[RMDB]
RNA sequence: GGGAACGACUCGAGUAGAGUCGAAAACGUAUCGAGAAACUACUUCCAGCGGUAAAACACAUGUAUCAAACAAGAGGCCCUGCUGCGUUCGUCCAGGGAACAACAGCCACCAUAUUUAGGCAGAUAGCAUUCCGUUAUCUUUCGAGAUAACGGAAUGAAAAGAAACAACAACAACAAC
Reactivity to 2A3 in 0.01 (KOAc 150mM, MgCl2 10mM, bicine 150mM(pH8.5), 24C), signal-to-noise 4, nucleotides 027 to 126: c060g070u080a100u140c070g020a030g070a170a080a020c060u110a030c000u050u030c010c010a040g000c030g030g060u100a060a050a130a000c090a030c020a050u100g070u080a120u140c090a070a050a160c030a030a090g030a080g100g000c010c000c010u040g000c030u040g010c030g060u060u100c010g030u020c030c010a020g000g040g040a000a040c000a030a000c000a020g020c000c020a040c040c010a080u090a100u200u160u140a040g040g000c010a010g010a090u120a030g030
Reactivity to DMS in 0.01 (KOAc 150mM, MgCl2 10mM, bicine 150mM(pH8.5), 24C), signal-to-noise 5, nucleotides 027 to 126: c090g010u010a070u000c090g010a110g010a100a080a090c070u000a060c070u000u000c020c020a060g020c050g010g010u000a050a060a080a080c070a060c090a060u000g010u000a060u000c100a060a090a090c130a070a070g020a150g000g000c040c030c030u000g000c040u010g000c080g010u010u000c060g010u000c070c060a070g000g000g000a020a040c060a050a050c060a060g010c020c040a060c050c030a050u010a060u000u010u000a080g030g000c040a050g000a110u000a080g000